[RMDB]
RNA sequence: GGGAACGACUCGAGUAGAGUCGAAAAGAUGAUUAGUUCGCUAAUCAUCAAAGAACGCUGCAACGCGCAGAGAGCGCGCGAGAGCGAGAAUGCGCGAAGUAAAAAGUUACGGGUUCGCCCGUAACAACACGAAGUGAGUGUUCGCACUCACUUCGUGAAAAGAAACAACAACAACAAC
Reactivity to 2A3 in 0.01 (KOAc 150mM, MgCl2 10mM, bicine 150mM(pH8.5), 24C), signal-to-noise 1, nucleotides 027 to 126: g000a010u000g000a000u000u010a020g020u010u030c070g010c110u010a000a000u000c000a000u010c010a000a010a010g060a090a030c030g020c110u110g050c050a050a050c030g010c000g000c010a000g080a010g030a040g100c010g000c030g040c080g180a070g000a020g080c020g000a010g010a020a030u060g000c020g010c020g030a070a000g030u080a040a070a030a050a050g000u000u000a000c000g000g020g030u030u010c160g040c050c000c020g000u000a000a000c000a010a010
Reactivity to DMS in 0.01 (KOAc 150mM, MgCl2 10mM, bicine 150mM(pH8.5), 24C), signal-to-noise 2, nucleotides 027 to 126: g020a020u000g010a000u000u000a030g030u010u020c180g050c000u000a000a000u010c000a020u000c020a030a080a150g020a120a120c040g070c070u000g010c040a120a160c030g010c000g040c000a080g010a110g000a170g010c070g000c010g000c030g000a180g010a180g000c000g000a010g010a120a110u000g010c040g000c000g010a060a220g000u020a040a020a050a130a040g010u000u000a010c000g000g000g010u000u000c200g000c010c000c000g000u010a000a000c020a080a080
An RNA of 177 nucleotides, treated with 2A3 and DMS and read out base by base. Conditions: 150 mM KOAc, 10 mM MgCl2 and 150 mM bicine (pH 8.5), 24 C. 2A3 adducts were read by reverse transcription with SuperScript II with manganese.